This 177-nucleotide RNA was probed chemically with 2A3 and DMS.
For DMS, 11,284 sequencing reads were counted.
The RNA was probed in 150 mM KOAc, 10 mM MgCl2 and 150 mM bicine (pH 8.5) at 24 C.
[RMDB]
RNA sequence: GGGAACGACUCGAGUAGAGUCGAAAAGUUGCCCGAGAAGAGAUCACACAGAUGAGACACAAGGUGCGAUGUCUCAUCACUUGGUUUUCGACAAGUGACGAGUCGUUCCCAAAAUCGCUCCAAUGAACACUAUUACCAAUUUCGAUUGGUAAUAGUGAAAAGAAACAACAACAACAAC
Reactivity to 2A3 in 0.01 (KOAc 150mM, MgCl2 10mM, bicine 150mM(pH8.5), 24C), signal-to-noise 1, nucleotides 027 to 126: g070u060u070g090c000c000c030g010a040g030a060a050g120a000g020a100u150c040a020c010a010c020a190g000a010u010g000a020g000a000c010a010c000a020a150g020g020u030g010c000g010a030u010g010u000c010u000c000a000u000c000a000c000u000u010g010g030u070u000u010u020c000g010a010c020a090a230g070u090g210a040c030g000a020g010u030c000g000u000u000c010c000c000a000a000a010a000u000c000g000c010u050c020c010a050a060u270g090a060a020
Reactivity to DMS in 0.01 (KOAc 150mM, MgCl2 10mM, bicine 150mM(pH8.5), 24C), signal-to-noise 8, nucleotides 027 to 126: g010u000u010g020c230c020c010g020a090g010a150a110g000a130g010a070u010c120a090c120a140c160a100g020a020u000g010a010g000a020c010a030c130a070a070g010g010u010g010c020g010a070u000g000u000c000u000c000a030u000c000a100c060u000u000g000g010u010u000u000u000c000g000a020c000a060a090g020u010g000a090c010g000a020g010u000c000g020u000u000c000c000c000a010a010a060a050u010c020g020c010u000c010c020a120a090u010g000a080a160